Chemical mapping of a 177-nucleotide RNA with 2A3 and DMS. The DMS profile rests on 2,649 reads. For 2A3, 4,150 sequencing reads were counted. In probing experiments dimethyl sulfate is read out at A N1 and C N3, which are open when not base-paired.
RNA sequence: GGGAACGACUCGAGUAGAGUCGAAAAGAUAUGGAGCCUCACAGACAUGCUGAUGGGUCGGAAACGACCCUGCCAGCAACAGCUGUGAGGGCUCCUAAGUCAAAAGGAUGUGGUUCGCCACAUCCAACUUACGCAAGGAGUUCGCUCCUUGCGUAAGAAAAGAAACAACAACAACAAC
Reactivity to 2A3 in 0.01 (KOAc 150mM, MgCl2 10mM, bicine 150mM(pH8.5), 24C), signal-to-noise 2, nucleotides 027 to 126: g000a010u020a030u090g000g010a000g020c010c010u000c000a000c010a000g090a010c130a210u300g000c000u000g000a030u050g010g020g000u000c010g000g000a000a020a020c000g000a010c000c000c010u000g040c020c000a000g020c020a220a120c070a050g000c000u000g000u000g020a020g000g000g000c010u000c000c000u000a000a000g020u010c020a050a040a030a240g010g000a010u010g000u020g010g100u070u120c300g110c110c000a020c000a000u000c000c000a000a000
Reactivity to DMS in 0.01 (KOAc 150mM, MgCl2 10mM, bicine 150mM(pH8.5), 24C), signal-to-noise 2, nucleotides 027 to 126: g000a040u000a090u000g000g000a010g000c000c000u000c000a010c010a010g000a060c120a240u000g010c010u000g000a300u000g000g000g000u000c000g050g010a030a020a100c030g000a010c000c000c000u010g020c240c010a010g010c000a080a070c280a120g010c000u000g030u000g000a040g010g010g010c000u000c000c000u000a010a100g000u000c010a060a060a150a230g020g000a010u000g020u000g000g010u000u010c270g010c010c000a000c010a010u010c000c010a030a060